The record gives the reactivity of an RNA of 177 nucleotides to 2A3 and DMS. Reactivities are given for positions 27 through 126. The 2A3 profile rests on 866 reads. Source: RMDB library OK2TRN, as collected in RNAgym. The reactions ran in a buffer of 150 mM KOAc, 10 mM MgCl2 and 150 mM bicine (pH 8.5), at 24 C. The DMS profile rests on 754 reads.
RNA sequence: GGGAACGACUCGAGUAGAGUCGAAAACUCAGCCUAUGGUGAAGCUCGCAGAAUAAGCAAGAUGUUCACGGCGACACAGACUGUCCAGCGGGCCUCAAGAGCCUCAGGGUAUGAUGGUUCGUCAGAGCUCACUCUCAGGUUUCGACCUGAGAGUGAGAAAAGAAACAACAACAACAAC
Reactivity to 2A3 in 0.01 (KOAc 150mM, MgCl2 10mM, bicine 150mM(pH8.5), 24C), signal-to-noise 1, nucleotides 027 to 126: c000u000c020a010g000c020c020u240a190u250g060g000u040g080a030a000g030c030u090c060g000c130a100g070a290a140u150a180a020g140c120a040a060g000a080u080g050u140u090c040a000c140g070g050c030g040a000c030a000c000a070g220a090c010u040g000u060c000c020a020g000c060g000g000g020c030c000u090c060a050a090g010a020g180c000c000u020c080a080g080g030g000u080a060u040g000a040u050g000g050u010u020c010g040u000c000a020g010a020g150
Reactivity to DMS in 0.01 (KOAc 150mM, MgCl2 10mM, bicine 150mM(pH8.5), 24C), signal-to-noise 1, nucleotides 027 to 126: c000u010c040a120g000c020c000u000a030u000g070g000u030g000a060a160g010c010u000c000g050c110a100g020a110a110u020a060a080g020c070a000a100g000a110u000g000u000u000c030a190c120g020g010c080g020a020c050a030c030a120g030a150c100u000g010u000c020c030a160g060c100g030g000g010c000c040u020c260a060a120g000a170g040c000c000u010c110a300g020g010g020u010a000u020g050a030u000g060g020u000u000c030g000u010c090a130g010a110g000